Overview: Structure probing data (2A3) for a 207-nucleotide construct. For 2A3 the reverse transcriptase was SuperScript II with manganese. As a SHAPE reagent, 2A3 marks flexible, mostly unpaired nucleotides at the ribose 2'-OH. Reactivities are given for positions 27 through 156.
RNA sequence: GGGAACGACUCGAGUAGAGUCGAAAAAUUGACGGUACGCCGUCAGAACGGUAGAAAAGAUGGUUUGAAAACCACGCCUUCUACCAAUAUAGUAAAUAAAUAGGCGGAGCGGUCAUACGUGACCGCAAAAACAUCCUUGGCUUCGGCCAAGGAUGAACAGGUAGGAAUGCUUCGGCAUUCCUACCUGAAAAGAAACAACAACAACAAC
Reactivity to 2A3 in 0.01 (KOAc 150mM, MgCl2 10mM, bicine 150mM(pH8.5), 24C), signal-to-noise 1, nucleotides 027 to 156: a000u060u000g000a000c000g020g000u010a040c160g020c140c000g000u000c000a000g020a080a000c050g000g000u000a000g010a030a010a010a000g020a140u010g070g070u030u060u300g120a190a260a030a000c000c000a000c040g010c000c000u040u050c000u000a000c000c000a000a000u030a020u000a000g050u040a040a080a140u040a000a190a000u270a030g000g080c000g000g000a000g000c000g080g010u000c000a000u040a200c050g040u000g000a000c000c000g000c000a000a000a000a000a000c000a000u000c000c000u000u000g000g000c000u190u110c300g100g000c000c000a000a000g000g010a000u000g000a000a010